[RMDB]
The record gives the reactivity of an RNA of 177 nucleotides to 2A3 and DMS.
2A3 adducts were read by reverse transcription with SuperScript II with manganese.
The DMS profile rests on 6,064 reads.
The 2A3 profile rests on 4,112 reads.
For DMS the reverse transcriptase was MarathonRT.
The reactions ran in a buffer of 150 mM KOAc, 10 mM MgCl2 and 150 mM bicine (pH 8.5), at 24 C.

RNA sequence: GGGAACGACUCGAGUAGAGUCGAAAAGCACUAUUCGCCGGGGCGGUGCCCGCACCGGGCUGGGCCUGAAAACCGACGUCGGUCUGACCACGUUUCAGCUGCUGAACGCCGAAGAUCCCAUGCAGGGGAUGAUUAGCACAUUCGUGUGCUAAUCAUCAAAAGAAACAACAACAACAAC
Reactivity to 2A3 in 0.01 (KOAc 150mM, MgCl2 10mM, bicine 150mM(pH8.5), 24C), signal-to-noise 3, nucleotides 027 to 126: g020c000a010c050u140a110u190u100c070g010c040c000g020g000g040g030c020g030g050u090g070c020c050c020g040c030a050c020c010g000g010g000c000u050g010g010g020c000c010u020g020a060a050a030a040c030c030g040a040c000g070u050c030g000g160u030c110u100g030a040c020c000a040c070g010u000u050u000c030a040g010c030u080g000c000u040g070a120a030c040g000c030c000g020a050a010g040a070u020c010c010c010a030u110g000c030a030g000g000g040
Reactivity to DMS in 0.01 (KOAc 150mM, MgCl2 10mM, bicine 150mM(pH8.5), 24C), signal-to-noise 5, nucleotides 027 to 126: g010c060a090c090u010a150u010u000c070g020c040c020g010g000g000g000c030g010g010u000g010c100c050c050g020c080a040c080c050g020g000g030c030u000g020g000g010c020c030u000g000a060a030a070a110c080c030g000a110c120g010u000c010g020g010u000c080u020g010a080c040c080a140c260g010u000u000u000c040a050g010c070u010g010c020u000g010a080a060c110g010c030c020g000a100a070g000a080u010c000c010c010a120u000g010c090a090g010g000g000